The record gives the reactivity of an RNA of 207 nucleotides to 2A3. Conditions: 150 mM KOAc, 10 mM MgCl2 and 150 mM bicine (pH 8.5), 24 C. For 2A3, 448 sequencing reads were counted. As a SHAPE reagent, 2A3 marks flexible, mostly unpaired nucleotides at the ribose 2'-OH.
[RMDB]
RNA sequence: GGGAACGACUCGAGUAGAGUCGAAAAUUCCUCGUUAAUCCGGUGGCAAAAAACUCAGACGCCAACGACGACGUCUACGCUGUAGCCGCUUAAGGCUUAAGCCCCGAACCCACUUGUGCCUGUGCUCGUGGAUGUAGGGUCACUAUCACGGGAUCGCCGAGUCCAAAAACUUCGGUUUUUGGACUCGAAAAGAAACAACAACAACAAC
Reactivity to 2A3 in 0.01 (KOAc 150mM, MgCl2 10mM, bicine 150mM(pH8.5), 24C), signal-to-noise 1, nucleotides 027 to 156: u030u000c010c020u010c040g030u000u150a150a130u070c020c000g050g000u030g000g020c060a010a060a100a120a100a140c110u180c110a040g030a070c070g030c010c000a030a010c020g050a000c000g000a010c020g030u040c080u100a080c020g070c040u020g050u110a010g010c000c030g050c210u220u210a180a000g000g000c010u000u000a030a000g000c000c000c000c000g050a090a050c000c000c000a000c000u010u000g010u010g010c020c020u060g000u060g010c000u000c020g000u000g000g000a010u080g000u080a000g000g000g000u010c030a060c020u130a050u060c000a000c060g000g000g000a010u150c000g020c070